Structure probing data (DMS and 2A3) for a 177-nucleotide construct. The RNA was probed in 150 mM KOAc, 10 mM MgCl2 and 150 mM bicine (pH 8.5) at 24 C.
[RMDB]
RNA sequence: GGGAACGACUCGAGUAGAGUCGAAAAGCAGCCGGCACAAAAGGCGAACUCUUUUUCUUUCUCCGACUGUCGGCGAAUGUUGUGUGAAGUUGGCGAGGGAUAUCAGCCCGUGGAAUACGGCAGACACCCAUAAAUCAUAGUUCGCUAUGAUUUAUGGAAAAGAAACAACAACAACAAC
Reactivity to DMS in 0.01 (KOAc 150mM, MgCl2 10mM, bicine 150mM(pH8.5), 24C), signal-to-noise 9, nucleotides 027 to 126: g010c230a170g010c000c010g000g000c040a040c250a060a050a110a130g010g010c070g000a050a070c230u020c020u000u010u010u020u020c060u010u000u010c020u010c000c030g000a100c150u000g020u000c010g000g010c010g020a080a060u030g000u000u000g000u000g000u010g000a060a150g000u010u000g010g010c060g010a040g000g000g000a070u020a060u020c070a100g010c060c000c000g010u000g000g010a110a080u030a060c040g000g000c040a100g000a110c180a070c120
Reactivity to 2A3 in 0.01 (KOAc 150mM, MgCl2 10mM, bicine 150mM(pH8.5), 24C), signal-to-noise 8, nucleotides 027 to 126: g060c090a010g000c010c010g030g020c030a060c070a060a160a010a020g040g010c060g030a050a050c030u110c080u160u130u030u140u040c050u020u080u000c020u020c010c010g030a040c030u030g040u070c010g010g020c050g030a080a090u120g010u070u020g030u000g020u020g080a060a050g020u030u030g030g010c060g010a060g000g030g020a020u050a060u170c050a030g050c000c020c000g010u040g000g010a110a050u100a090c000g000g000c010a010g030a060c030a050c010

For DMS the reverse transcriptase was MarathonRT. It was measured as part of the RMDB library OK1LIB.